[RMDB]
RNA sequence: GGGAACGACUCGAGUAGAGUCGAAAACGUAGUUCUGGUGAAGGAGUAAAUUAAACUGCCUCGCACCGCCGUACUCAUUUUUACCUCGAGUAUGGUGGCCGUGGAAUGGUGGUUUUUUAUGCAGUCGGUCAGCGACUUUUUUCGAAAAGUCGCUGACAAAAGAAACAACAACAACAAC
Reactivity to 2A3 in 0.01 (KOAc 150mM, MgCl2 10mM, bicine 150mM(pH8.5), 24C), signal-to-noise 1, nucleotides 027 to 126: c000g110u040a020g070u150u180c090u100g000g000u140g090a000a070g000g070a000g000u030a040a130a140u020u030a000a010a000c040u040g000c000c020u000c000g000c000a000c000c000g090c000c000g020u000a000c000u000c130a110u000u050u000u160u300a090c040c040u100c130g000a000g000u000a000u000g090g000u070g000g000c050c060g000u000g060g190a120a070u300g000g000u030g010g000u000u000u000u000u000u000a050u030g110c000a000g140u000c000g100

Notes
Structure probing data (2A3) for a 177-nucleotide construct. Source: RMDB library RFM100, as collected in RNAgym.